[RMDB]
RNA sequence: GGGAACGACUCGAGUAGAGUCGAAAAAUCCUCAGGUUCAUAAGCGUGAUGAUUGGGUGUUCAUGCUCCAUACAUGACAUGUGCCUCCUUUGAACCUUGUUACGACCUUGGCACAUUACCCAUCUGAAAAAGACGUUCGCGUUCGCGCGAACGUCAACUGUACUCUUUUCUUCGGAAAAGAGUACAGAAAAGAAACAACAACAACAAC
Reactivity to 2A3 in 0.01 (KOAc 150mM, MgCl2 10mM, bicine 150mM(pH8.5), 24C), signal-to-noise 4, nucleotides 027 to 156: a000u020c000c000u010c010a000g020g000u010u000c020a020u050a240a060g020c110g110u060g110a100u060g020a020u140u300g020g010g000u040g030u100u000c000a000u010g020c060u080c150c050a040u090a230c000a000u000g000a000c020a020u020g000u000g000c000c000u050c000c000u000u000u030g000a000a010c000c000u030u070g110u050u130a160c100g030a110c040c090u080u150g000g000c000a000c010a010u020u170a030c000c010c010a010u000c030u100g080a080a070a020a040a020g000a000c010g010u000u000c000g010c000g060u040u060c210g010c010g000c020g090a000a000c000g010u000c000a000a000
Reactivity to DMS in 0.01 (KOAc 150mM, MgCl2 10mM, bicine 150mM(pH8.5), 24C), signal-to-noise 1, nucleotides 027 to 156: a120u000c010c010u000c050a050g010g010u010u000c020a040u000a050a050g010c120g000u000g000a110u000g020a060u010u000g010g020g000u010g000u010u000c000a000u000g030c050u010c110c230a250u000a060c000a050u000g010a030c300a170u010g030u010g000c020c000u000c040c010u000u010u010g000a030a010c010c000u000u000g030u010u000a190c160g000a090c140c120u010u010g050g010c020a000c040a080u000u010a070c020c030c000a060u000c030u000g000a040a120a070a090a140g010a020c000g050u000u000c000g090c000g060u000u010c300g060c000g050c000g030a010a000c000g020u000c010a010a030